Chemical mapping of a 207-nucleotide RNA with 2A3 and DMS. For DMS the reverse transcriptase was MarathonRT. As a SHAPE reagent, 2A3 marks flexible, mostly unpaired nucleotides at the ribose 2'-OH. Values cover nucleotides 27 to 156. 2A3 adducts were read by reverse transcription with SuperScript II with manganese.
RNA sequence: GGGAACGACUCGAGUAGAGUCGAAAAGGCUGCGUAUCACUCUAGGGUACGUGAUAGUGCGAUAUAAGAAGCACUGGUACAUCCCGGCAGGGACAGUUAAGAGAUGGCCGCAGUCUCGUGUCCCUGCAAAAGGAGUUCUCGUUCGCGAGAACUCCAACUUAUGUAAGAUGUUCGCAUCUUACAUAAGAAAAGAAACAACAACAACAAC
Reactivity to 2A3 in 0.01 (KOAc 150mM, MgCl2 10mM, bicine 150mM(pH8.5), 24C), signal-to-noise 8, nucleotides 027 to 156: g060g000c040u030g000c020g010u030a040u030c020a080c170u150c160u220a130g110g000g000u030a020c030g020u030g050a090u140a070g000u010g000c020g030a020u040a020u080a300a110g130a120a010g010c000a000c010u000g030g010u080a050c030a060u030c000c000c000g020g000c020a000g000g000g000a010c010a050g050u150u210a190a030g010a000g000a030u040g070g040c090c040g050c080a020g030u000c000u000c010g030u030g000u000c000c000c000u000g000c000a000a010a000a010g000g000a000g000u000u000c000u000c000g030u070u060c240g000c000g080a000g000a000a000c000u000c000c000a000a000
Reactivity to DMS in 0.01 (KOAc 150mM, MgCl2 10mM, bicine 150mM(pH8.5), 24C), signal-to-noise 5, nucleotides 027 to 156: g010g040c030u000g030c010g020u000a080u000c030a080c100u000c130u010a150g020g020g020u000a030c080g050u000g010a090u010a020g020u000g020c010g010a160u000a140u010a150a140g010a180a280g000c000a030c010u010g020g000u010a080c060a170u000c010c000c010g020g000c050a030g000g010g010a010c010a040g010u000u000a110a130g000a050g010a060u000g020g010c060c150g000c140a230g020u000c000u010c010g010u000g010u000c000c000c000u000g000c020a020a020a070a110g000g000a020g020u000u000c000u000c000g020u000u000c280g020c020g010a020g000a000a010c000u000c000c000a000a020